[RMDB]
RNA sequence: GGGAACGACUCGAGUAGAGUCGAAAACAAUGAUGAGCAAUUCGCUAUUGCCGCCUAAGAACGGUUAGCCGGGGCUGCUAGAGCCUUGUUACCAAAGAUAGCCGGCGGGGACUUCGGUCCCCGUCGUUGAAGGGCUGUACGUUCGCGUACAGCCCAAGUUGCUAAUUGACUUCGGUCAAUUAGCAACAAAAGAAACAACAACAACAAC
Reactivity to 2A3 in 0.01 (KOAc 150mM, MgCl2 10mM, bicine 150mM(pH8.5), 24C), signal-to-noise 1, nucleotides 027 to 156: c030a020a230u220g050a070u110g040a060g070c050a040a130u160u130c040g000c000u040a040u100u120g000c010c000g080c020c050u080a030a070g030a060a010c000g010g000u050u020a020g010c020c020g000g010g010g000c010u040g010c020u030a010g000a020g080c010c000u000u020g020u050u140a040c030c020a020a000a000g070a080u010a020g010c000c000g000g000c000g010g000g000g000a000c010u000u040c260g050g000u000c000c000c000c000g000u000c000g010u000u000g000a010a000g000g000g000c010u000g000u010a020c020g010u030u050c160g000c000g040u000a000c000a010g020c000c000c000a000a000
Chemical mapping of a 207-nucleotide RNA with 2A3.
Source: RMDB library M2RFPK, as collected in RNAgym.
The reactions ran in a buffer of 150 mM KOAc, 10 mM MgCl2 and 150 mM bicine (pH 8.5), at 24 C.